[RMDB]
Structure probing data (DMS and 2A3) for a 177-nucleotide construct. Values cover nucleotides 27 to 126. Source: RMDB library 15KREP, as collected in RNAgym. Conditions: 150 mM KOAc, 10 mM MgCl2 and 150 mM bicine (pH 8.5), 24 C.
RNA sequence: GGGAACGACUCGAGUAGAGUCGAAAAGAGGGUUUGAGGAGAACUCACCUCCAGAGGACCCCUUCAGCGAACAGAGGAGUCUCUACCUCGGAGGAGAAAGACCGUAGCGAUGGGGGAGAUGCUAGGACCAUUUACAGAUGUUCGCAUCUGUAAAUGGAAAAGAAACAACAACAACAAC
Reactivity to DMS in 0.01 (KOAc 150mM, MgCl2 10mM, bicine 150mM(pH8.5), 24C), signal-to-noise 3, nucleotides 027 to 126: g010a110g020g000g020u000u000u000g030a300g000g000a080g000a160a110c110u000c120a120c050c000u000c000c010a040g030a180g000g000a030c050c000c010c030u000u000c120a110g000c050g000a030a040c080a160g000a050g000g000a090g000u010c030u000c050u000a160c070c030u010c090g000g000a180g010g010a070g000a080a060a080g010a040c060c040g020u000a080g000c040g000a110u010g010g000g010g020g010a080g020a040u010g000c050u000a060g000g010a240
Reactivity to 2A3 in 0.01 (KOAc 150mM, MgCl2 10mM, bicine 150mM(pH8.5), 24C), signal-to-noise 2, nucleotides 027 to 126: g150a040g020g050g010u080u070u100g040a030g020g020a050g010a120a060c010u010c080a070c010c000u000c010c010a070g020a020g050g020a030c000c000c010c010u020u080c030a040g020c000g050a040a010c020a040g030a020g110g020a040g050u010c010u000c020u090a130c020c020u010c020g030g010a040g020g000a030g030a030a110a000g050a020c040c070g040u030a030g010c020g030a050u060g020g000g000g040g000a030g010a020u070g000c000u060a040g000g070a050